The record gives the reactivity of an RNA of 207 nucleotides to 2A3. Reactivities are given for positions 27 through 156. For 2A3 the reverse transcriptase was SuperScript II with manganese. The RNA was probed in 150 mM KOAc, 10 mM MgCl2 and 150 mM bicine (pH 8.5) at 24 C. Values are in units of 0.01, from 0 to 300, in steps of 10.

[RMDB]
RNA sequence: GGGAACGACUCGAGUAGAGUCGAAAAUUGGCGAAUGCCUGUGGAUCUACAUUUGUUGCGGGUUCGAGACCCGUCAGAGCCCGGCUCUGUAGCUCAAUGGUAGAGCGGUGUAUUCACAUAAACUUGUCGCCACCCUAAAGAUCCCUUCGGGGAUCAAGGAGCAGACAAGAUUCGUCUUGUCUGCUCCAAAAGAAACAACAACAACAAC
Reactivity to 2A3 in 0.01 (KOAc 150mM, MgCl2 10mM, bicine 150mM(pH8.5), 24C), signal-to-noise 3, nucleotides 027 to 156: u070u040g000g000c000g000a040a020u030g020c030c050u000g000u000g000g020a010u000c070u170a020c040a030u060u050u180g050u060u020g030c000g010g020g010u000u010c000g000a020g010a050c000c000c000g000u000c000a020g000a010g000c130c220c190g100g000c000u000c000u000g040u030a010g000c000u000c010a040a040u210g290g050u180a040g000a000g000c000g020g000u000g000u010a030u000u010c000a000c020a010u100a030a110a040c050u070u050g100u090c000g000c000c000a010c000c000c000u030a050a060a030g000a010u010c000c000c000u020u080c260g050g010g000g000a010u010c000a000a030